RNA sequence: GGGAACGACUCGAGUAGAGUCGAAAAGAUAUGGAUCUGCAUGGUGGAGCUGCAUGUCGGAAACGACAUGACAGCUAUGAAGCCAUGGAUCCUAAGUCAAACAAAUCGUGGUUCGCCACGAUUUGAAGCUGUACACAAUCUUCGGAUUGUGUACAGCAAAAGAAACAACAACAACAAC
Reactivity to DMS in 0.01 (KOAc 150mM, MgCl2 10mM, bicine 150mM(pH8.5), 24C), signal-to-noise 2, nucleotides 027 to 126: g010a000u000a040u020g000g000a030u000c010u020g010c010a020u000g010g010u000g000g000a030g000c000u000g020c000a000u000g010u000c000g030g010a000a010a010c000g000a010c030a020u000g020a090c000a000g000c000u010a050u010g010a240a230g000c000c010a000u000g000g000a000u000c000c000u000a010a080g000u000c000a180a160a300c010a000a020a000u000c010g070u000g010g000u000u020c300g030c020c000a010c010g020a000u000u000u020g000a070a110
Reactivity to 2A3 in 0.01 (KOAc 150mM, MgCl2 10mM, bicine 150mM(pH8.5), 24C), signal-to-noise 1, nucleotides 027 to 126: g000a020u020a000u050g010g010a010u000c010u110g080c040a010u040g010g000u030g000g050a040g000c000u020g000c020a000u000g000u010c040g000g000a000a020a000c000g040a010c000a020u000g010a010c000a010g000c000u050a170u040g010a000a000g010c000c000a000u020g000g000a010u010c000c010u010a030a000g020u020c030a100a000a060c000a030a000a000u010c010g000u010g050g080u080u100c300g080c100c000a000c000g000a000u000u000u000g000a020a010